[RMDB]
RNA sequence: GGGAACGACUCGAGUAGAGUCGAAAAUGAGAUAGCUAAAUCACCUCGGUAUGAUUAGGGUGAGACCUAGGAACCGUAGGGGUAUUCUCAAAAGAAGCUUUUGCAGUGACGCCCAUGUAAGUGGGAUAAGAACCAACCCACUUCGGUGGGUUGGUAACAAUGCAGUACCGUUCGCGGUACUGCAUUGAAAAGAAACAACAACAACAAC
Reactivity to DMS in 0.01 (KOAc 150mM, MgCl2 10mM, bicine 150mM(pH8.5), 24C), signal-to-noise 2, nucleotides 027 to 156: u010g000a050g010a080u010a070g020c010u000a060a100a110u000c020a040c010c000u010c050g030g070u000a070u000g010a250u010u000a040g020g020g010u030g030a200g000a170c010c030u020a080g000g020a150a060c030c000g020u010a030g000g010g000g010u000a060u000u000c000u000c020a040a080a110a140g000a150a100g010c030u030u000u010u010g050c010a080g010u000g020a080c060g010c010c010c000a020u000g000u020a080a150g020u000g000g000g010a060u000a050a090g010a080a110c000c000a050a000c020c000c000a020c020u010u010c300g050g000u000g020g020g010u010u010g000g000u010a000a050
Reactivity to 2A3 in 0.01 (KOAc 150mM, MgCl2 10mM, bicine 150mM(pH8.5), 24C), signal-to-noise 3, nucleotides 027 to 156: u080g010a030g000a030u110a090g040c070u120a040a110a110u100c050a090c030c010u030c020g020g010u230a130u210g050a070u040u030a010g010g030g020u050g080a050g040a060c010c010u020a020g010g010a020a040c010c000g020u070a030g000g000g000g000u020a050u080u030c020u020c020a030a060a000a020g070a070a010g020c020u040u120u240u280g040c130a020g020u020g010a040c110g000c020c000c010a000u030g120u200a120a140g000u050g010g000g000a030u090a080a040g050a000a000c000c000a000a000c000c000c000a010c000u020u010c060g060g000u000g000g000g000u000u000g000g000u000a000a000
Record summary
Structure probing data (DMS and 2A3) for a 207-nucleotide construct. The 2A3 profile rests on 1,801 reads.